Source: RMDB library OK2TST, as collected in RNAgym. Chemical mapping of a 177-nucleotide RNA with 2A3 and DMS. High DMS reactivity at an A or C suggests that its Watson-Crick edge is free. The 2A3 profile rests on 1,208 reads. The reactions ran in a buffer of 150 mM KOAc, 10 mM MgCl2 and 150 mM bicine (pH 8.5), at 24 C. Reactivities are given for positions 27 through 126. 2A3 adducts were read by reverse transcription with SuperScript II with manganese.
RNA sequence: GGGAACGACUCGAGUAGAGUCGAAAAACUGGGGUCGCGUUGGCUCGACUGCUAGGAUUCCAGUCUGUCUUGUCGAAUUCCGCUGCAUUCGAGCGAGGCCUCGCUGCAGUUGAGGCUCUUGUGGAUAGCGCAAAAUUAGUUUCGACUAAUUUUGCGCAAAAGAAACAACAACAACAAC
Reactivity to 2A3 in 0.01 (KOAc 150mM, MgCl2 10mM, bicine 150mM(pH8.5), 24C), signal-to-noise 1, nucleotides 027 to 126: a000c020u000g030g000g000g030u000c030g020c030g170u020u080g110g030c040u010c040g030a020c010u060g000c010u000a030g060g000a000u050u000c010c010a040g090u010c010u140g220u030c080u140u080g070u070c030g030a040a040u200u000c000c030g190c140u040g100c010a020u050u000c020g000a000g020c000g040a040g050g040c010c000u000c030g000c050u140g000c000a120g000u100u060g020a010g040g000c040u020c040u180u080g040u060g020g010a100u050a050
Reactivity to DMS in 0.01 (KOAc 150mM, MgCl2 10mM, bicine 150mM(pH8.5), 24C), signal-to-noise 2, nucleotides 027 to 126: a090c040u010g010g010g020g020u000c040g020c110g020u020u000g000g000c010u020c040g000a030c070u000g020c010u020a150g010g000a090u000u010c020c040a090g000u030c180u020g010u010c060u000u000g010u000c110g000a080a090u000u010c020c040g000c130u010g010c020a050u000u000c050g030a020g020c020g000a070g000g010c010c020u000c020g010c200u000g010c150a060g010u000u030g000a040g000g000c020u000c030u000u020g000u000g000g000a120u000a140